[RMDB]
RNA sequence: GGGAACGACUCGAGUAGAGUCGAAAAGGAGGAGGCCAUCCACGUGACCCUCACCAGGUGCGCGACCGAAUCGAUGGCUGAGGAGCAGGCGAGACGACUCAUGGCGUAUCAGCUCAUAAGCCGGGCCACCCCCUAAGAAUUUCGAUUCUUAGGGGGUAAAAGAAACAACAACAACAAC
Reactivity to 2A3 in 0.01 (KOAc 150mM, MgCl2 10mM, bicine 150mM(pH8.5), 24C), signal-to-noise 4, nucleotides 027 to 126: g050g010a040g010g020a040g040g000c030c010a020u020c020c020a050c050g040u030g090a100c010c010c010u020c030a060c010c030a010g030g040u100g050c020g000c010g030a050c040c050g030a030a060u120c070g040a070u140g020g000c020u020g030a040g040g050a030g040c060a020g080g060c060g020a030g030a060c040g040a050c020u060c120a130u130g050g000c010g000u040a040u120c040a020g020c000u000c030a040u080a090a030g000c000c020g010g010g000c000c010
Reactivity to DMS in 0.01 (KOAc 150mM, MgCl2 10mM, bicine 150mM(pH8.5), 24C), signal-to-noise 7, nucleotides 027 to 126: g010g010a080g000g010a160g000g010c030c030a090u000c030c090a130c080g020u010g000a090c030c010c010u010c170a120c110c130a140g000g010u000g010c060g020c040g010a120c090c050g000a090a090u010c110g000a090u000g020g010c030u010g010a100g010g010a060g010c060a090g000g000c060g000a060g010a060c050g000a070c040u000c100a090u010g010g000c030g000u000a050u010c070a100g010c020u000c040a060u010a120a060g010c030c020g010g010g000c050c070